[RMDB]
RNA sequence: GGGAACGACUCGAGUAGAGUCGAAAAUACGCAGAAGCGGCAUCAGAGGUCGAGGAAUUGUUGGGGGUGGUGGCCUCCGACGGAUGGCAGGGGCAAGCCGCCGAGGCGUUUGUCGCCGCGUACAUGCGUUAGUGCCUAGGUUCGCCUAGGCACUAACAAAAGAAACAACAACAACAAC
Reactivity to DMS in 0.01 (KOAc 150mM, MgCl2 10mM, bicine 150mM(pH8.5), 24C), signal-to-noise 2, nucleotides 027 to 126: u020a060c030g020c010a010g020a180a180g020c000g030g000c000a180u000c050a030g030a080g000g020u000c040g010a200g030g010a160a130u010u000g020u000u010g040g000g000g000g010u000g020g020u000g010g010c030c000u000c000c010g030a010c020g000g020a140u010g010g000c040a120g010g020g000g000c180a110a080g000c040c040g000c020c010g000a210g000g000c000g010u000u000u000g010u000c130g000c010c010g000c030g020u000a070c170a160u000g010c080
Conditions: 150 mM KOAc, 10 mM MgCl2 and 150 mM bicine (pH 8.5), 24 C. The record gives the reactivity of an RNA of 177 nucleotides to DMS. Reactivities are given for positions 27 through 126. DMS adducts were read by reverse transcription with MarathonRT.